[RMDB]
RNA sequence: GGGAACGACUCGAGUAGAGUCGAAAAACUUAAACAUUCUUGUAUAUGCAUAUGUAUAAUACAUACAUACACAUAUCGUAUGUACAUAUAUGCAUACAUACAUACACAUAUCGUAUGUACAUAUAUGAGGACCACCACGGUUCGCCGUGGUGGUCCUAAAAGAAACAACAACAACAAC
Reactivity to 2A3 in 0.01 (KOAc 150mM, MgCl2 10mM, bicine 150mM(pH8.5), 24C), signal-to-noise 1, nucleotides 027 to 126: a000c130u130u060a000a300a000c010a060u070u140c000u080u090g000u000a000u000a000u070g070c000a060u000a000u000g030u000a010u080a300a000u140a070c090a000u040a000c000a000u010a000c030a050c010a200u080a020u070c130g000u030a000u020g080u000a000c000a000u030a000u000a000u080g160c050a000u000a000c000a000u000a000c000a000u040a000c200a000c000a240u100a010u240c170g000u000a000u000g070u090a000c010a000u060a000u000a010u000g050
The record gives the reactivity of an RNA of 177 nucleotides to 2A3. Source: RMDB library OK1LIB, as collected in RNAgym. For 2A3, 326 sequencing reads were counted. Conditions: 150 mM KOAc, 10 mM MgCl2 and 150 mM bicine (pH 8.5), 24 C.